[RMDB]
RNA sequence: GGGAACGACUCGAGUAGAGUCGAAAACGUGUCCGUCGGCGUAGCCGACAACAUGCCCAGGUAGCCCAGACCUUCAAGGCUACGGUGCGUUGCGACGCACGGUCUGAUUCUUCACACCGACGUUCACAAGAUCGGAUCACUUUCGAGUGAUCCGAAAUCCAUUUCUGCUGUUCGCAGCAGAAAUGGAAAAAGAAACAACAACAACAAC
Reactivity to 2A3 in 0.01 (KOAc 150mM, MgCl2 10mM, bicine 150mM(pH8.5), 24C), signal-to-noise 1, nucleotides 027 to 156: c020g000u000g010u030c110c140g000u000c010g000g040c300g150u140a000g040c010c000g020a000c000a000a000c030a040u090g010c000c020c010a030g020g000u000a020g020c000c030c070a020g000a010c000c000u010u010c030a000a020g000g000c000u010a020c000g000g000u000g010c010g000u000u120g000c120g170a000c000g050c000a000c000g020g010u000c000u000g000a020u030u080c120u100u140c040a050c000a020c110c050g140a120c070g100u060u080c060a080c050a230a020g040a210u050c000g000g010a000u000c000a000c000u030u100u090c180g160a000g000u000g000a000u000c000c000g000a000a000a000

An RNA of 207 nucleotides, treated with 2A3 and read out base by base. Values are in units of 0.01, from 0 to 300, in steps of 10. Reactivities are given for positions 27 through 156. 2A3 adducts were read by reverse transcription with SuperScript II with manganese. The RNA was probed in 150 mM KOAc, 10 mM MgCl2 and 150 mM bicine (pH 8.5) at 24 C.